The data come from the RNA Mapping Database (RMDB), library M2RFOK. This 207-nucleotide RNA was probed chemically with DMS and 2A3. For 2A3 the reverse transcriptase was SuperScript II with manganese. The reactions ran in a buffer of 150 mM KOAc, 10 mM MgCl2 and 150 mM bicine (pH 8.5), at 24 C.
RNA sequence: GGGAACGACUCGAGUAGAGUCGAAAAAACGUUGCAUGAUCGUAAAACAUGCCCGGCUUACCCUGAGCCGCCUUUGAAAGAAAGGUUUACACGGACUCUGUUGCGUUACGCACGUACCUAACUUGUGAAAACGGCAUCUUGUUCGCAAGAUGCCGAAUCUACUCUAACACUUCGGUGUUAGAGUAGAAAAAGAAACAACAACAACAAC
Reactivity to DMS in 0.01 (KOAc 150mM, MgCl2 10mM, bicine 150mM(pH8.5), 24C), signal-to-noise 1, nucleotides 027 to 156: a050a060c020g000u010u010g000c000a040u000g010a070u010c060g010u000a040a070a050a070c040a030u000g040c030c040c030g030g020c000u010u000a060c070c050c080u000g030a050g040c020c020g000c000c010u000u000u010g020a160a100a140g000a110a010a010g010g010u000u000u000a100c110a150c000g010g020a070c030u000c020u000g030u010u000g010c020g010u010u000a070c040g010c030a080c050g020u000a060c040c020u010a070a110c060u000u000g010u000g010a070a050a060a190c020g000g010c020a010u000c000u010u000g010u000u030c260g010c030a030a020g000a050u020g030c010c000g000a020a000
Reactivity to 2A3 in 0.01 (KOAc 150mM, MgCl2 10mM, bicine 150mM(pH8.5), 24C), signal-to-noise 5, nucleotides 027 to 156: a000a000c000g000u000u000g000c000a000u010g020a040u170c010g060u200a050a170a000a030c000a000u000g000c000c000c000g010g000c010u010u040a090c020c010c030u050g020a000g010c000c000g030c000c010u050u010u000g100a130a070a010g040a020a020a010g030g000u020u070u050a020c040a010c030g060g030a060c030u020c060u130g070u100u030g010c020g030u040u080a040c120g010c010a010c010g020u010a020c000c020u030a060a130c040u110u130g020u030g080a000a030a010a030c000g000g000c000a000u000c000u010u020g020u060u040c100g020c140a000a000g010a000u000g000c000c000g000a000a000